[RMDB]
RNA sequence: GGGAACGACUCGAGUAGAGUCGAAAAGGUUACAUCCUGGAAGAGUAAAUCUGCCUUUUAGAUAACUCACUACCUCUCUUCCCAAGGUGAUUCACGGAGGGAGAAGCUUGGCGGCCCUGCCUGGCUGUUCUUCCCCAGGCCCUGGGAACUUUGCAGAAGGCUGUCCCGAGCUGCCAGUGCUGGCCCAAGUCCAGCUUGGCUGACCUUGAGCAUCUCAGCGGGAUGGCAAGAGCCAAAGCCGAGGUGUCUCCAGGGCUCUCGAGAAAAGCAUCUCGUUCGCGAGAUGCAAAAGAAACAACAACAACAAC
Reactivity to DMS in 0.01 (KOAc 150mM, MgCl2 10mM, bicine 150mM(pH8.5), 24C), signal-to-noise 2, nucleotides 027 to 266: g000g000u010u010a090c110a070u010c010c000u010g010g000a070a160g000a070g000u000a070a210a030u010c000u010g000c290c170u020u000u020u010a070g000a050u010a160a070c030u000c000a100c160u010a110c020c030u000c050u020c110u010u000c010c010c010a080a080g020g010u020g000a130u020u000c180a090c140g000g010a150g020g020g010a020g020a040a030g010c030u000u000g000g010c010g010g010c230c150c110u010g000c030c010u000g000g000c000u000g010u030u000c010u000u010c010c030c020c010a210g000g000c010c000c080u000g000g000g020a070a050c030u000u000u000g000c040a060g020a190a130g000g020c000u000g000u000c000c050c020g010a180g020c040u000g000c000c000a020g010u030g010c030u000g010g010c040c220c140a080a200g000u030c030c010a000g000c000u000u000g030g000c000u010g000a060c080c090u020u010g010a020g000c070a090u030c050u000c040a050g020c010g010g000g010a040u010g000g000c000a020a000g010a300g010c070c040a020a080a080g000c250c110g030a010g000g010u000g010u010c070u010c030c040a010g010g010g010c070u000c010u000c080g000a130g000a050a100a210a160
Reactivity to 2A3 in 0.01 (KOAc 150mM, MgCl2 10mM, bicine 150mM(pH8.5), 24C), signal-to-noise 1, nucleotides 027 to 266: g010g000u050u160a100c000a060u050c010c000u040g070g030a210a080g090a070g010u190a050a070a110u040c080u030g090c040c000u010u300u050u110a020g010a090u030a030a090c010u070c020a030c070u130a040c000c000u000c020u050c030u020u050c030c000c010a030a030g020g070u110g060a170u130u200c140a080c090g040g020a190g070g010g010a010g030a050a000g000c000u000u000g020g000c000g030g130c060c070c110u020g000c000c000u030g080g000c030u000g060u040u000c000u000u010c030c020c000c000a030g070g050c030c000c010u000g000g010g010a010a010c010u010u010u070g020c010a020g000a300a090g080g000c000u020g010u000c030c000c000g040a050g060c040u010g000c000c010a140g070u060g130c030u020g000g060c090c030c100a090a030g010u090c030c020a000g000c020u010u010g000g000c000u000g020a050c000c000u040u070g010a030g020c040a040u170c090u020c070a050g080c050g040g010g010a010u070g000g000c020a120a080g020a000g040c040c020a060a050a000g030c010c030g040a010g010g000u070g070u000c080u010c030c000a000g010g020g030c000u000c030u030c000g130a070g150a000a140a010a010